[RMDB]
RNA sequence: GGGAACGACUCGAGUAGAGUCGAAAAGCAUUGGAACAAACACACAGAGACCCUCUUCAUGUGGUGAUGACCCCUCAAUUGCGACGCACUGUAUUGAGCGAGGGUUUACCAUCAAUUUGGCUGACUGAUCCUCGUACACCUUCGGGUGUACGAGGAUAAAAGAAACAACAACAACAAC
Reactivity to DMS in 0.01 (KOAc 150mM, MgCl2 10mM, bicine 150mM(pH8.5), 24C), signal-to-noise 1, nucleotides 027 to 126: g010c060a020u000u000g010g000a130a110c140a140a070a070c080a130c160a090c040a030g010a080g000a100c010c000c000u020c010u000u000c070a020u000g040u020g000g020u000g050a040u000g010a130c080c010c010c090u000c150a010a110u010u020g000c040g010a030c030g010c050a050c020u000g020u000a020u000u000g000a030g010c210g010a070g000g000g010u000u000u000a080c010c020a000u000c090a080a180u000u000u000g020g020c040u010g020a110c040u000g000